[RMDB]
Record summary: Structure probing data (2A3 and DMS) for a 177-nucleotide construct. Values cover nucleotides 27 to 126. Conditions: 150 mM KOAc, 10 mM MgCl2 and 150 mM bicine (pH 8.5), 24 C. 2A3 adducts were read by reverse transcription with SuperScript II with manganese. For DMS the reverse transcriptase was MarathonRT. Source: RMDB library RFM100, as collected in RNAgym.
RNA sequence: GGGAACGACUCGAGUAGAGUCGAAAACGGUGUUGGAGGAGCCAGUCCUGUGAUAACACCUGAGGGGGUGCAUCGCCGAGGUGAUUGAACGGCUGGCCACGUUCAUCAUCGGCUACAGGGGCUGAAUUGCAACUACCUUAUUCGUAAGGUAGUUGCAAAAAGAAACAACAACAACAAC
Reactivity to 2A3 in 0.01 (KOAc 150mM, MgCl2 10mM, bicine 150mM(pH8.5), 24C), signal-to-noise 3, nucleotides 027 to 126: c030g000g010u030g010u020u020g010g040a080g000g010a000g060c040c000a020g030u060c000c020u120g020u000g130a030u060a150a010c030a010c000c010u040g070a190g030g120g000g030g000u100g060c070a070u050c080g000c000c010g050a040g050g060u100g010a080u080u060g010a030a020c000g050g000c020u040g080g000c000c000a050c000g020u010u020c010a020u000c000a000u000c010g020g000c010u060a040c040a070g010g000g010g000c000u030g020a070a090u040
Reactivity to DMS in 0.01 (KOAc 150mM, MgCl2 10mM, bicine 150mM(pH8.5), 24C), signal-to-noise 2, nucleotides 027 to 126: c040g010g020u000g000u000u010g010g060a060g030g000a130g000c030c010a020g030u020c030c060u000g020u020g000a080u020a130a150c030a070c030c000u000g000a120g060g000g000g020g000u000g020c240a110u010c190g070c060c020g000a000g000g010u010g010a070u020u050g000a030a030c000g000g010c010u020g010g000c010c060a010c000g020u000u000c000a040u000c020a010u000c020g020g020c000u010a080c130a070g000g000g000g020c010u000g000a080a100u050